[RMDB]
RNA sequence: GGGAACGACUCGAGUAGAGUCGAAAAACGUCAGUCCAUACGUGGACUGACGACCUGUGGACUGUCGCAUCCACUCCGGUACGCACCGCGCGAGCGGGCGGAAAGAGGACAGGUAGAAGCAGGAAAAGGGACAGCUCAGAUUCGUCUGAGCUGUCCCAAAAGAAACAACAACAACAAC
Reactivity to 2A3 in 0.01 (KOAc 150mM, MgCl2 10mM, bicine 150mM(pH8.5), 24C), signal-to-noise 1, nucleotides 027 to 126: a010c010g000u020c000a000g020u010c000c040a090u080a170c300g080u010g000g000a020c000u050g000a000c000g000a000c000c000u000g000u000g000g020a000c000u000g000u070c040g000c260a110u020c070c000a010c000u020c020c000g000g030u030a000c000g000c020a300c120c000g010c000g000c000g000a010g000c000g040g010g000c010g020g030a000a000a000g020a000g010g020a000c000a000g040g000u040a010g010a100a000g000c040a000g080g000a000a000a150a110
An RNA of 177 nucleotides, treated with 2A3 and read out base by base.
The reactions ran in a buffer of 150 mM KOAc, 10 mM MgCl2 and 150 mM bicine (pH 8.5), at 24 C.
For 2A3, 719 sequencing reads were counted.
Source: RMDB library RFM100, as collected in RNAgym.